[RMDB]
RNA sequence: GGGAACGACUCGAGUAGAGUCGAAAACCCACGACUUUCGAGUCGUGGGAAAUAUAAUCAGCGGUAAAUAAUUAGCUCCGCUUACCGCUGAAGCGCAGCAUACACGUCUAGGAUUCGUCCUAGACAAGUAUCGGAUAGAAUUCGUUCUAUCCGAUACAAAAGAAACAACAACAACAAC
Reactivity to 2A3 in 0.01 (KOAc 150mM, MgCl2 10mM, bicine 150mM(pH8.5), 24C), signal-to-noise 7, nucleotides 027 to 126: c000c000c000a000c000g010a000c000u070u110u170c220g130a010g000u000c000g000u020g000g000g010a000a080a000u240a010u030a030a200u030c010a000g000c000g050g040u050a020a050a050u120a050a180u180u170a050g020c040u040c050c040g030c010u000u010a020c000c000g000c010u000g010a020a010g030c110g000c030a080g020c020a040u080a160c060a020c160g010u000c000u000a000g000g000a020u030u050c160g060u000c050c000u010a000g000a000c000a000a000
Reactivity to DMS in 0.01 (KOAc 150mM, MgCl2 10mM, bicine 150mM(pH8.5), 24C), signal-to-noise 6, nucleotides 027 to 126: c010c000c000a020c010g010a010c000u000u010u010c130g020a010g020u000c010g040u000g010g010g000a000a020a050u010a090u010a140a110u000c000a010g000c000g000g000u000a010a040a090u010a080a110u000u000a130g000c050u000c070c050g000c120u000u000a010c000c000g000c000u000g000a010a050g010c120g010c120a060g010c100a110u000a100c190a070c190g000u000c000u000a010g000g010a030u000u010c220g010u000c000c010u000a000g000a000c010a020a050
An RNA of 177 nucleotides, treated with 2A3 and DMS and read out base by base. It was measured as part of the RMDB library M2PK50. Values cover nucleotides 27 to 126. For 2A3, 13,551 sequencing reads were counted.